Overview:
Structure probing data (2A3 and DMS) for a 207-nucleotide construct. Values are in units of 0.01, from 0 to 300, in steps of 10. For 2A3 the reverse transcriptase was SuperScript II with manganese. The 2A3 profile rests on 2,636 reads. The RNA was probed in 150 mM KOAc, 10 mM MgCl2 and 150 mM bicine (pH 8.5) at 24 C.

RNA sequence: GGGAACGACUCGAGUAGAGUCGAAAAGUGAACGAUCUCGGUGGUUUCUCUGAAGGCAUGAUCACCCCGUCCGAUGCGGAAGUUCGUGCUUCCGUCGAACGCGAAAGUCGGACGGCGGCCAUGAGUCAAUAUGUUUAAGGCUUCGGCCUUAAACAAAUCAUAAAAUCUUCUUCGGAAGAUUUUAUGAAAAAGAAACAACAACAACAAC
Reactivity to 2A3 in 0.01 (KOAc 150mM, MgCl2 10mM, bicine 150mM(pH8.5), 24C), signal-to-noise 4, nucleotides 027 to 156: g150u130g070a120a030c030g010a070u030c010u020c050g000g050u030g000g000u010u030u000c050u000c030u070g090a110a030g100g000c010a010u040g010a010u050c020a050c000c010c000c010g000u010c010c000g000a000u020g010c020g000g010a000a010g010u150u300c160g150u300g060c000u000u000c010c000g020u010c010g030a130a060c080g010c010g140a100a050a010g020u010c000g000g000a000c000g000g000c000g000g030c020c010a020u030g020a010g070u040c010a020a070u050a050u260g000u000u000u000a000a000g000g000c010u010u040c190g130g000c000c000u000u000a010a010a000c000a000a000a000
Reactivity to DMS in 0.01 (KOAc 150mM, MgCl2 10mM, bicine 150mM(pH8.5), 24C), signal-to-noise 3, nucleotides 027 to 156: g010u000g030a060a150c060g000a060u000c010u000c020g010g030u000g000g020u010u000u000c010u010c050u000g010a110a140g010g020c030a030u010g000a080u010c110a110c000c000c000c000g000u000c000c020g010a040u000g020c030g010g000a030a040g030u000u000c200g020u000g020c020u000u000c020c020g050u000c050g010a070a150c140g000c090g000a100a120a180g020u000c010g010g000a030c010g000g020c040g010g010c040c020a030u000g010a110g000u000c040a100a130u010a090u000g020u000u000u000a010a010g010g010c000u000u000c300g060g000c000c000u000u000a000a010a010c010a000a050a080